[RMDB]
RNA sequence: GGGAACGACUCGAGUAGAGUCGAAAAUGUGCCCAUCCGGCUGGCUGGACACACUAGACACCUCCCAGGUCCUCGUGUGUACCUGGUUGAGAGGCUCAUUGCUUGUGAAAAUCCAUUCAUGGUUAACGAAGACUCGAGUUCGCUCGAGUCAAAAGAAACAACAACAACAAC
Reactivity to 2A3 in 0.01 (KOAc 150mM, MgCl2 10mM, bicine 150mM(pH8.5), 24C), signal-to-noise 8, nucleotides 027 to 129: u080g020u050g030c010c000c000a020u020c020c020g120g060c130u150g040g000c040u040g000g010a010c000a000c000a000c030u010a020g030a030c020a030c040c020u060c020c030c030a000g020g000u050c030c010u050c070g090u080g020u020g010u110a070c010c000u010g000g000u070u150g060a090g010a010g060g000c010u020c020a090u070u160g050c050u080u130g010u010g070a050a040a020a040u030c010c020a040u030u080c020a040u110g020g030u060u100a120a040c080g050a110a040
Reactivity to DMS in 0.01 (KOAc 150mM, MgCl2 10mM, bicine 150mM(pH8.5), 24C), signal-to-noise 5, nucleotides 027 to 129: u030g010u080g030c000c050c010a100u000c030c050g000g020c090u060g010g070c060u040g010g000a100c010a030c020a040c060u000a120g040a080c100a060c110c050u050c000c000c000a120g030g040u020c000c000u040c190g050u000g030u040g050u030a000c040c030u010g030g040u030u040g020a210g000a050g000g000c080u000c030a080u020u020g020c080u000u000g010u060g020a020a020a080a060u040c040c030a110u070u030c070a070u050g000g000u050u020a060a050c120g000a030a010